[RMDB]
RNA sequence: GGGAACGACUCGAGUAGAGUCGAAAAGCAACUUAGGAUUUUAGGCUCCCCGUGCGUGUCUCGAACCAUGCCGGGCCAAACCCACGGGGGCUGGCGGUCCCCGCGCGGUCAAAAUCAAACCGCUGGAAAAACAGUUCUAGCUUCGGCUAGAACUGAACUAUACCUAUUUGUUCGCAAAUAGGUAUAGAAAAGAAACAACAACAACAAC
Reactivity to DMS in 0.01 (KOAc 150mM, MgCl2 10mM, bicine 150mM(pH8.5), 24C), signal-to-noise 1, nucleotides 027 to 156: g000c070a040a100c090u000u010a110g000g020a130u010u000u000u000a080g000g030c000u010c030c030c000c060g050u010g000c060g000u010g000u000c060u020c150g000a070a120c160c020a090u010g030c020c060g060g020g000c040c030a010a060a120c000c000c020a070c060g010g000g020g000g020c000u000g000g030c110g030g030u000c000c030c020c050g040c020g020c060g000g010u010c060a100a110a150a160u010c060a100a070a060c040c010g000c010u020g020g010a040a060a070a110a180c000a000g010u000u000c000u000a010g000c000u000u000c300g030g090c000u000a000g010a000a010c000u020g000a000a090
Reactivity to 2A3 in 0.01 (KOAc 150mM, MgCl2 10mM, bicine 150mM(pH8.5), 24C), signal-to-noise 4, nucleotides 027 to 156: g040c020a010a100c100u160u160a140g060g070a200u170u100u070u170a060g010g000c020u100c010c010c010c010g050u110g030c010g020u060g020u050c050u040c220g090a080a060c050c010a040u070g030c000c000g020g000g000c020c020a090a060a000c010c000c000a010c000g000g000g000g000g000c010u000g010g000c000g010g000u010c010c000c000c000g000c000g010c050g010g020u050c030a050a060a040a170u100c040a080a130a090c010c000g000c030u030g050g010a080a100a010a000a000c000a000g000u010u010c000u000a010g000c000u070u050c250g040g000c000u000a010g000a000a000c000u000g000a000a000
Structure probing data (DMS and 2A3) for a 207-nucleotide construct. High 2A3 reactivity points to a flexible backbone, as in loops and unpaired stretches. For 2A3 the reverse transcriptase was SuperScript II with manganese. The reactions ran in a buffer of 150 mM KOAc, 10 mM MgCl2 and 150 mM bicine (pH 8.5), at 24 C. For 2A3, 3,532 sequencing reads were counted.